Chemical mapping of a 177-nucleotide RNA with 2A3 and DMS.
DMS adducts were read by reverse transcription with MarathonRT.
The 2A3 profile rests on 2,415 reads.
High 2A3 reactivity points to a flexible backbone, as in loops and unpaired stretches.
It was measured as part of the RMDB library TTRDEL.
Conditions: 150 mM KOAc, 10 mM MgCl2 and 150 mM bicine (pH 8.5), 24 C.
RNA sequence: GGGAACGACUCGAGUAGAGUCGAAAAGAUAUGGACGAGUCGUAGGCGAACUAAGACAGUCGGAAACGAUCGAGUUCCCUACGAGCUCGUCCUAAGUCAAACCUAGCCCAGUUCGCUGGGCUAGGAACAUUCCAAGCUUCUUCGGAAGCUUGGAAUGAAAAGAAACAACAACAACAAC
Reactivity to 2A3 in 0.01 (KOAc 150mM, MgCl2 10mM, bicine 150mM(pH8.5), 24C), signal-to-noise 1, nucleotides 027 to 126: g020a030u080a020u120g010g000a000c000g000a000g000u020c010g030u000a000g000g030c270g060a000a000c020u060a070a030g180a110c110a080g080u080c040g020g040a060a140a070c000g000a030u140c050g000a000g010u010u040c000c010c010u000a000c010g000a020g000c020u000c000g000u000c000c000u000a010a010g000u000c020a000a110a000c020c000u020a000g000c000c020c010a010g020u080u060c250g050c170u000g030g010g000c000u000a000g000g000a000a000
Reactivity to DMS in 0.01 (KOAc 150mM, MgCl2 10mM, bicine 150mM(pH8.5), 24C), signal-to-noise 2, nucleotides 027 to 126: g000a010u000a300u000g010g000a000c010g000a030g000u000c010g010u000a010g010g020c210g000a030a000c010u000a180a070g000a090c300a090g020u000c020g000g000a130a070a130c020g020a010u000c070g000a020g000u000u010c000c000c000u000a010c000g000a010g000c000u000c010g000u000c000c000u000a000a030g010u020c060a060a090a130c000c000u010a010g010c000c000c000a010g030u000u030c220g000c000u000g000g010g000c000u000a000g000g000a030a070